[RMDB]
RNA sequence: GGGAACGACUCGAGUAGAGUCGAAAAGAGCAUAAGAAUCAAGCUGUGUGCAUAAUAAUUGCAUGGGAUUUCACAGCUGGGCCCCAUUCCCAGGGAUUUUGUAUUAUCUACCUCCAAGUGAUUUUGAUGCUGGUGAUCCUUGGACCAGACUUGGUGACCGUCUACUAAUAUUCGUAUUAGUAGACGGAAAAGAAACAACAACAACAAC
Reactivity to 2A3 in 0.01 (KOAc 150mM, MgCl2 10mM, bicine 150mM(pH8.5), 24C), signal-to-noise 4, nucleotides 027 to 156: g030a010g020c060a060u110a170a100g050a140a080u160c070a060a000g000c010u010g020u010g000u020g050c010a010u060a100a090u140a120a060u300u030g040c040a040u120g010g000g150a060u050u240u250c060a020c000a020g030c000u000g000g040g000c030c000c000c000a010u000u020c000c000c000a000g040g000g000a020u080u130u110u140g020u040a050u090u020a030u040c030u070a050c020c020u000c010c010a030a020g010u060g110a070u040u090u110u300g080a060u110g020c040u010g000g050u020g040a100u060c020c030u040u080g060g010a010c010c000a000g030a040c010u050u030g000g000u000g050a030
Reactivity to DMS in 0.01 (KOAc 150mM, MgCl2 10mM, bicine 150mM(pH8.5), 24C), signal-to-noise 3, nucleotides 027 to 156: g020a090g010c040a160u020a100a130g020a110a060u000c030a110a060g010c030u010g030u000g010u000g010c070a050u000a100a130u000a090a110u000u000g030c020a080u000g030g030g030a100u010u000u000c030a040c020a030g040c020u000g010g020g010c010c010c020c030a110u000u000c000c010c020a250g010g020g020a090u000u010u010u000g010u000a100u000u000a080u000c030u000a060c020c030u000c020c020a060a060g040u000g010a090u000u010u000u000g010a170u010g020c020u000g040g020u000g000a080u010c020c010u010u010g020g000a070c040c000a050g020a050c070u000u010g000g000u000g000a200
An RNA of 207 nucleotides, treated with 2A3 and DMS and read out base by base. DMS adducts were read by reverse transcription with MarathonRT. The DMS profile rests on 6,883 reads. The reactions ran in a buffer of 150 mM KOAc, 10 mM MgCl2 and 150 mM bicine (pH 8.5), at 24 C. The 2A3 profile rests on 1,816 reads. Reactivities are given for positions 27 through 156. It was measured as part of the RMDB library OK3TST. 2A3 adducts were read by reverse transcription with SuperScript II with manganese.